[RMDB]
RNA sequence: GGGAACGACUCGAGUAGAGUCGAAAAGUGGAUUUGUUCGCAAAUCCACAAAUCCCAACAAGCCUGGCUGGCAGCCUAACAACCGAGCAACGCGGCGUAGCAAAAGGUUACACUUCGGUGUAACCAAUCGUAUCAUUUGGUUCGCCAAAUGAUACGAAAAAGAAACAACAACAACAAC
Reactivity to 2A3 in 0.01 (KOAc 150mM, MgCl2 10mM, bicine 150mM(pH8.5), 24C), signal-to-noise 2, nucleotides 027 to 126: g000u000g000g000a000u000u000u010g020u010u040c070g000c120a000a000a000u020c000c000a000c000a000a010a000u000c010c000c000a000a020c020a000a010g050c000c030u060g050g010c010u010g030g020c040a020g020c010c010u040a060a030c040a000a040c020c040g020a020g030c030a020a070c020g050c020g050g000c020g040u030a020g030c050a010a030a040a090g030g000u010u010a000c000a000c000u010u140c210g100g010u000g000u010a000a000c010c000a000a000
Reactivity to DMS in 0.01 (KOAc 150mM, MgCl2 10mM, bicine 150mM(pH8.5), 24C), signal-to-noise 3, nucleotides 027 to 126: g030u010g010g000a010u020u000u000g020u000u030c160g020c010a000a000a020u000c000c010a010c000a020a060a110u000c000c000c010a130a120c170a100a060g010c080c060u000g010g030c030u010g000g010c050a050g000c050c030u000a070a090c120a070a040c070c020g000a080g000c010a030a070c120g010c090g020g000c030g010u000a040g010c110a060a070a070a090g030g010u000u000a000c000a010c000u000u010c200g010g000u000g000u000a000a010c000c000a030a040